[RMDB]
Structure probing data (DMS) for a 177-nucleotide construct. The reactions ran in a buffer of 150 mM KOAc, 10 mM MgCl2 and 150 mM bicine (pH 8.5), at 24 C.
RNA sequence: GGGAACGACUCGAGUAGAGUCGAAAAUUGCUUUGUUUAGUGGAUUGCUAAGUUUAAAAUUCACAUUGGAUAUUAGUCAGAACUGUUUGUAUGACCAUAAUAUUCACAAUAUUGUCUGAGAUAUUAGCCAAAAGGCGUCAUUCGUGACGCCUUUUGGAAAAGAAACAACAACAACAAC
Reactivity to DMS in 0.01 (KOAc 150mM, MgCl2 10mM, bicine 150mM(pH8.5), 24C), signal-to-noise 1, nucleotides 027 to 126: u000u000g000c040u000u000u000g000u010u000u010a050g030u000g000g000a050u000u030g000c100u000a120a170g000u000u000u000a070a080a080a040u010u000c030a010c050a180u000u000g010g000a000u000a030u000u000a080g020u000c000a000g020a180a100c110u000g020u000u000u040g030u000a060u000g000a000c030c260a060u000a070a030u010a030u030u000c000a050c300a110a050u000a040u000u000g000u020c120u000g010a090g010a050u000a040u000u000a120g010
DMS adducts were read by reverse transcription with MarathonRT. It was measured as part of the RMDB library OK2TST.